[RMDB]
RNA sequence: GGGAACGACUCGAGUAGAGUCGAAAAUCGAACAAAAACUUUUUCGUGCCAUUUUGUGAAGAUUUUGAGAAUAAGUAUCUUAAGAAUGCUGAAUCACUUUCAUGGGAUAAACAUUGGUUUUGGCAACGACCCUACGUAACUUCGGUUACGUAGGGUCAAAAGAAACAACAACAACAAC
Reactivity to 2A3 in 0.01 (KOAc 150mM, MgCl2 10mM, bicine 150mM(pH8.5), 24C), signal-to-noise 2, nucleotides 027 to 126: u110c000g000a010a010c060a000a010a000a000a050c070u140u140u050u210u100c120g030u000g140c000c000a050u000u000u010u010g000u000g130a000a250g030a070u010u010u070u020g050a070g120a000a120u070a100a000g200u120a060u000c030u030u100a190a050g110a180a090u170g070c030u050g000a120a060u110c000a050c150u220u020u070c060a050u150g020g000g010a100u100a300a070a110c200a080u000u260g160g040u060u060u000u000g070g040c000a020a020c050
Reactivity to DMS in 0.01 (KOAc 150mM, MgCl2 10mM, bicine 150mM(pH8.5), 24C), signal-to-noise 1, nucleotides 027 to 126: u000c070g000a120a010c000a000a000a010a000a010c030u000u000u000u020u040c080g050u010g000c070c010a150u000u000u020u000g000u000g010a060a060g020a010u000u000u000u000g050a120g000a040a050u020a090a170g000u000a000u000c000u010u030a170a100g010a240a000u000g000c000u020g000a110a190u000c050a040c120u000u000u000c060a010u000g030g010g010a130u050a060a000a040c130a030u000u020g000g000u000u010u000u000g040g010c050a040a080c050
This 177-nucleotide RNA was probed chemically with 2A3 and DMS. For DMS, 1,519 sequencing reads were counted. For DMS the reverse transcriptase was MarathonRT. For 2A3, 344 sequencing reads were counted.